[RMDB]
RNA sequence: GGGAACGACUCGAGUAGAGUCGAAAACAUCUUGUUCGCAAGAUGAGUGAGCGUACUACUGGAAGUUCGUUGAUCUACUCUCCCCACCAAGUUCCCAAAUAGGAACUUGAGGAGUAGGGAGAACCCAGUAUCGCGUAAAGUUGCAUUCGUGCAACAAAACAGCACAAAGAUUCGUCUUUGUGCUGUUAAAAGAAACAACAACAACAAC
Reactivity to DMS in 0.01 (KOAc 150mM, MgCl2 10mM, bicine 150mM(pH8.5), 24C), signal-to-noise 4, nucleotides 027 to 156: c010a000u000c000u000u000g010u010u010c300g050c010a010a020g020a000u010g000a150g020u000g020a170g020c010g030u000a070c070u000a030c000u000g000g020a160a130g020u000u000c010g020u000u010g010a040u000c010u000a010c010u010c020u000c300c080c040c060a300c170c010a010a030g000u000u000c010c000c010a050a180a160u000a050g010g010a010a020c010u010u000g000a250g000g000a040g040u000a030g000g020g000a040g010a010a030c010c000c010a030g010u000a040u000c040g000c030g000u000a080a090a170g000u000u000g000c000a220u000u000c180g000u010g010c010a030a090c030a030a070
Reactivity to 2A3 in 0.01 (KOAc 150mM, MgCl2 10mM, bicine 150mM(pH8.5), 24C), signal-to-noise 4, nucleotides 027 to 156: c010a010u010c000u030u050g030u110u120c270g020c100a000a000g000a020u020g020a040g150u140g090a100g000c010g030u070a040c040u000a010c000u030g030g040a260a130g070u030u000c040g080u150u030g000a010u010c000u010a010c000u000c020u090c040c060c010c000a030c050c000a010a000g000u010u000c010c000c020a120a130a030u160a050g000g000a000a000c000u000u000g000a010g030g000a010g000u000a000g000g010g000a030g000a000a000c000c000c000a000g010u020a050u180c030g000c000g020u080a120a070a070g000u000u000g000c000a000u020u170c230g130u060g010c010a000a000c000a020a140